Chemical mapping of a 177-nucleotide RNA with DMS and 2A3. 2A3 adducts were read by reverse transcription with SuperScript II with manganese. The data come from the RNA Mapping Database (RMDB), library OK2TST.
RNA sequence: GGGAACGACUCGAGUAGAGUCGAAAAGCUGAUGAUCCGCGGCAGCAACGACGACUGGGCGCUCAAGAUGAUCGAAGAGUACGAAGCGCACGGCCUGACCAGUGGCGUACCGGCCGAAGCGUGGGACCGAGUCCUAACCAUUCGUGGUUAGGACUCGAAAAGAAACAACAACAACAAC
Reactivity to DMS in 0.01 (KOAc 150mM, MgCl2 10mM, bicine 150mM(pH8.5), 24C), signal-to-noise 2, nucleotides 027 to 126: g000c040u020g010a080u000g020a030u020c070c040g000c160g030g000c020a040g030c040a100a060c130g000a120c130g000a150c090u010g000g000g000c030g020c030u010c070a130a100g000a060u020g000a080u000c080g020a130a060g020a110g010u040a150c070g010a120a220g000c000g020c010a220c000g000g010c000c000u000g020a080c040c040a200g010u010g020g030c140g030u000a070c070c090g000g000c010c010g040a100a020g000c030g000u000g000g000g020a100c120
Reactivity to 2A3 in 0.01 (KOAc 150mM, MgCl2 10mM, bicine 150mM(pH8.5), 24C), signal-to-noise 2, nucleotides 027 to 126: g020c020u030g010a070u050g010a010u030c000c030g000c010g040g000c020a020g000c030a050a050c040g090a020c020g040a010c060u070g020g050g000c010g000c000u020c040a040a000g050a090u120g010a050u110c050g080a100a010g040a030g080u050a050c020g000a040a020g010c010g030c020a000c020g000g030c010c010u020g020a010c030c000a170g110u130g300g000c030g000u060a180c040c000g020g000c000c020g030a120a030g050c000g000u050g000g020g020a000c070
The RNA was probed in 150 mM KOAc, 10 mM MgCl2 and 150 mM bicine (pH 8.5) at 24 C.